[RMDB]
RNA sequence: GGGAACGACUCGAGUAGAGUCGAAAAGCUAGUCGGUGACGACUAGCAGCCACGACUAAGGUCGUGGGAAGAUGCUCACAAACUGGUCAGUGGCAUCAAUAACUACAUCAUGGUCAGAAACCGGAUUAACGGAUAACAUUAAAAUUUAAGAUGUAGGGACGUGGGAAAAUUUCGAUUUUCCCACGUCAAAAGAAACAACAACAACAAC
Reactivity to 2A3 in 0.01 (KOAc 150mM, MgCl2 10mM, bicine 150mM(pH8.5), 24C), signal-to-noise 2, nucleotides 027 to 156: g000c000u000a000g000u000c000g090g040u100g030a040c000g000a020c000u000a000g000c000a000g000c040c000a000c000g000a000c000u060a100a140g090g000u000c000g010u000g000g000g010a030a050g060a010u020g000c040u180c300a040c000a070a200a120c150u190g070g030u050c010a010g000u000g030g000c000a000u030c000a000a040u110a010a030c000u000a000c000a000u000c010a050u160g020g040u020c010a000g030a130a010a010c000c000g030g070a180u100u160a130a040c020g000g070a190u070a060a000c070a080u080u220a060a080a030a000u100u090u080a090a050g000a000u010g010u000a000g170g000
Notes:
Source: RMDB library OK3TST, as collected in RNAgym. Chemical mapping of a 207-nucleotide RNA with 2A3. Values cover nucleotides 27 to 156. The reactions ran in a buffer of 150 mM KOAc, 10 mM MgCl2 and 150 mM bicine (pH 8.5), at 24 C.